[RMDB]
RNA sequence: GGGAACGACUCGAGUAGAGUCGAAAAGUUUACUAAAAACACAGGGGGCUGCAAUCCGGCAACGGUUUGUACAGCCCCUGAGUCCUGCCCAGUGCGGGUACCUGAAACCAGGGUACAACCGGGCGAAUAAUCCUAUCUCGUUCGCGAGAUAGGAUUAAAAAGAAACAACAACAACAAC
Reactivity to 2A3 in 0.01 (KOAc 150mM, MgCl2 10mM, bicine 150mM(pH8.5), 24C), signal-to-noise 2, nucleotides 027 to 126: g010u040u000u000a260c170u090a080a090a030a030a000c020a000c000a020g030g000g020g020g000c010u010g010c000a000a010u000c000c010g000g000c020a070a070c000g010g010u020u000u010g020u050a020c000a020g000c000c000c000c000u000g000a000g000u000c000c000u000g000c000c000c000a080g020u090g130c180g060g220g000u010a000c000c000u000g030a130a050a060c150c040a060g000g030g020u000a000c000a000a000c000c020g010g000g000c000g000a010a020
Reactivity to DMS in 0.01 (KOAc 150mM, MgCl2 10mM, bicine 150mM(pH8.5), 24C), signal-to-noise 3, nucleotides 027 to 126: g020u000u010u000a080c110u060a030a090a030a050a000c010a140c070a150g000g000g010g010g010c000u000g020c010a040a010u000c000c010g010g030c300a080a130c000g000g000u000u010u000g000u060a090c000a010g010c000c000c000c000u000g000a050g010u000c010c010u000g010c010c000c000a040g010u020g030c160g020g030g010u000a010c000c010u000g010a130a130a160c300c220a080g000g000g010u000a000c010a190a050c000c010g000g010g030c000g000a180a130

Source: RMDB library RFM100, as collected in RNAgym. The record gives the reactivity of an RNA of 177 nucleotides to 2A3 and DMS. The RNA was probed in 150 mM KOAc, 10 mM MgCl2 and 150 mM bicine (pH 8.5) at 24 C.